[RMDB]
RNA sequence: GGGAACGACUCGAGUAGAGUCGAAAAGAUAUGGAAAGGCGAAGAUUUCUCUUGGAUUUAUAGUCACAGCUAGUCGGAAACGACUAGUCACAGCUAUUGUCAGAGACAUCUUCGCCUUUCCUAAGUCCAUCAUAAAACCCUUCGGGGUUUUAUGAUGAAAAGAAACAACAACAACAAC
Reactivity to DMS in 0.01 (KOAc 150mM, MgCl2 10mM, bicine 150mM(pH8.5), 24C), signal-to-noise 1, nucleotides 027 to 126: g000a090u000a300u020g000g000a000a000a020g010g020c020g020a030a000g010a020u000u010u020c020u000c010u020u010g020g040a030u000u000u000a000u000a030g020u000c070a160c300a300g000c020u000a020g020u020c000g000g010a040a070a190c000g000a020c010u020a000g030u000c070a150c300a160g000c000u000a010u000u000g000u000c010a000g000a030g020a000c040a000u000c000u010u000c000g020c000c000u000u000u000c000c000u000a060a090g000u020c070
Structure probing data (DMS) for a 177-nucleotide construct.
Source: RMDB library TTRINS, as collected in RNAgym.
The RNA was probed in 150 mM KOAc, 10 mM MgCl2 and 150 mM bicine (pH 8.5) at 24 C.
For DMS the reverse transcriptase was MarathonRT.
For DMS, 820 sequencing reads were counted.